[RMDB]
RNA sequence: GGGAACGACUCGAGUAGAGUCGAAAACAAACAAGUAUCAGACAUCCUGCAGCAACCAGAGCUCUACCGCACAGUACGAGACGACAACUGUCAAGAUGAGCAAGGCCGAUGGGUCAACGUCUGUCAGCUAGACUGUGGAAUCAAACGACUCAACAAGUCCAGUAUGUUGUUUCGACAACAUACUGGAAAAAGAAACAACAACAACAAC
Reactivity to DMS in 0.01 (KOAc 150mM, MgCl2 10mM, bicine 150mM(pH8.5), 24C), signal-to-noise 2, nucleotides 027 to 156: c040a140a140a050c080a050a100g030u000a080u000c040a090g010a130c050a060u000c020c040u000g030c010a080g030c050a100a080c030c040a110g010a210g000c020u040c010u030a190c070c070g030c040a070c040a040g030u000a110c050g030a110g000a120c030g000a080c020a040a070c030u020g030u000c010a040a090g030a090u000g000a090g020c000a060a070g060g040c060c000g000a100u000g040g040g000u000c030a040a070c040g040u020c020u000g010u000c060a050g000c020u000a070g000a050c040u010g050u000g040g020a060a080u020c050a020a150a130c060g010a080c020u000c020a030a030c160a050a180g000
Reactivity to 2A3 in 0.01 (KOAc 150mM, MgCl2 10mM, bicine 150mM(pH8.5), 24C), signal-to-noise 4, nucleotides 027 to 156: c050a000a070a000c020a030a070g050u060a080u130c030a020g030a030c010a040u060c010c020u060g010c020a010g010c020a010a050c020c020a020g000a020g130c000u000c000u020a040c020c030g100c030a020c010a020g050u100a070c030g040a040g030a130c040g040a030c030a130a030c050u040g030u050c020a060a060g010a110u080g010a010g030c030a050a030g030g000c010c010g100a110u180g050g010g030u050c040a060a030c060g010u000c010u030g050u040c010a000g030c010u050a020g010a080c010u020g030u020g070g050a000a030u090c040a070a050a030c090g070a020c070u100c030a020a040c020a140a030g250
Structure probing data (DMS and 2A3) for a 207-nucleotide construct. The 2A3 profile rests on 3,105 reads. For DMS, 2,295 sequencing reads were counted. Reactivities are rounded to 0.1 and cut off at 0 and 3.